[RMDB]
RNA sequence: GGGAACGACUCGAGUAGAGUCGAAAAGAUAUGGACACAUGGCUUCGAUAAGCUGUGUGUCGGAAACGACAUAUACAGCUUUUGACGAAGAGUGUGUCCUAAGUCAAAAGCAGCCUUCGGGCUGCAAGGAUACCCUAGACUUCGGUCUAGGGUAUCCAAAAGAAACAACAACAACAAC
Reactivity to DMS in 0.01 (KOAc 150mM, MgCl2 10mM, bicine 150mM(pH8.5), 24C), signal-to-noise 2, nucleotides 027 to 126: g000a050u000a300u000g000g010a030c010a000c000a000u000g040g040c000u000u000c020g010a160u000a030a010g040c030u000g050u000g020u000g000u000c000g010g000a080a070a160c010g010a040c010a020u030a140u000a270c040a000g030c030u000u000u000u000g050a240c110g010a040a040g000a300g040u000g000u000g010u000c030c000u000a000a110g010u030c190a190a070a150a040g000c000a030g050c000c000u000u000c180g020g020g000c000u000g000c000a030a020
Reactivity to 2A3 in 0.01 (KOAc 150mM, MgCl2 10mM, bicine 150mM(pH8.5), 24C), signal-to-noise 2, nucleotides 027 to 126: g010a020u070a000u160g010g000a000c000a000c020a050u140g300g110c010u010u010c020g080a100u040a180a000g010c000u000g000u000g010u020g000u040c020g000g010a040a040a000c000g000a020c000a000u220a030u070a180c000a030g010c040u210u180u210u300g300a240c130g030a030a000g010a000g010u010g000u000g000u010c000c000u000a000a000g010u010c000a030a030a000a200g000c020a010g020c050c000u120u200c260g090g000g000c010u030g000c000a010a010
The data come from the RNA Mapping Database (RMDB), library TTRDES. The record gives the reactivity of an RNA of 177 nucleotides to DMS and 2A3. For 2A3, 2,319 sequencing reads were counted.